The record gives the reactivity of an RNA of 207 nucleotides to 2A3.
As a SHAPE reagent, 2A3 marks flexible, mostly unpaired nucleotides at the ribose 2'-OH.
RNA sequence: GGGAACGACUCGAGUAGAGUCGAAAACAGGAAACUGGUUAAUCGUUUUCCUUGGUAGUAUAGCGGAAACCAUAAAUAAGAAGAACUCUAAGUGCUUGAGUAGAGUUAAAAUAAUUAGACGGGCAAUUAAGGUACUCCACGUUCGCGUGGAGUACAAGUUCUAGCACAAGUUCGCUUGUGCUAGAACAAAAGAAACAACAACAACAAC
Reactivity to 2A3 in 0.01 (KOAc 150mM, MgCl2 10mM, bicine 150mM(pH8.5), 24C), signal-to-noise 3, nucleotides 027 to 156: c030a010g090g000a030a070a040c050u090g010g100u120u200a090a090u140c050g000u010u030u060u090c000c020u020u030g110g000u020a070g010u030a050u090a150g040c050g010g040a070a020a030c050c000a030u090a130a080a030u120a080a030g060a060a010g030a070a020c000u000c010u020a020a020g030u040g170c010u050u030g020a020g020u030a000g010a000g020u080u120a020a020a000a000u070a020a020u190u020a030g010a020c010g010g000g010c000a000a060u150u110a140a040g140g010u000a000c000u000c000c000a010c000g020u040u030c170g010c010g090u000g000g000a000g010u000a000c000a000a000
For 2A3 the reverse transcriptase was SuperScript II with manganese.